Structure probing data (2A3) for a 207-nucleotide construct. For 2A3 the reverse transcriptase was SuperScript II with manganese.
RNA sequence: GGGAACGACUCGAGUAGAGUCGAAAAAUUGCAAAAGUUGACUUCCAGGAAGGGACUUUUGCUAGAGCUGCGUAAGACCUAACAGUCUUGGUAGCCCGAUAGUCUGAAACUGGACCGAGGGUUUUAGAAUCUAUCGUCAUUUUCUUGGUAUGAAUUCGUUCUAUGGUUACUUCGGUAACCAUAGAACAAAAGAAACAACAACAACAAC
Reactivity to 2A3 in 0.01 (KOAc 150mM, MgCl2 10mM, bicine 150mM(pH8.5), 24C), signal-to-noise 2, nucleotides 027 to 156: a000u050u080g000c010a020a020a000a000g010u040u070g170a270c010u080u070c130c140a050g140g080a000a020g020g040g010a000c000u000u040u030u040g020c000u000a000g010a020g050c000u010g000c010g140u210a030a000g000a010c000c000u050a080a050c020a060g000u010c000u000u010g010g010u010a000g000c000c000c000g000a000u010a000g030u040c000u000g030a030a010a000c020u030g070g040a020c060c030g010a030g010g020g000u000u000u000u000a010g010a020a000u140c010u030a010u020c010g120u030c170a150u150u140u160u120c010u030u010g000g000u060a110u210g120a130a130u130u080c010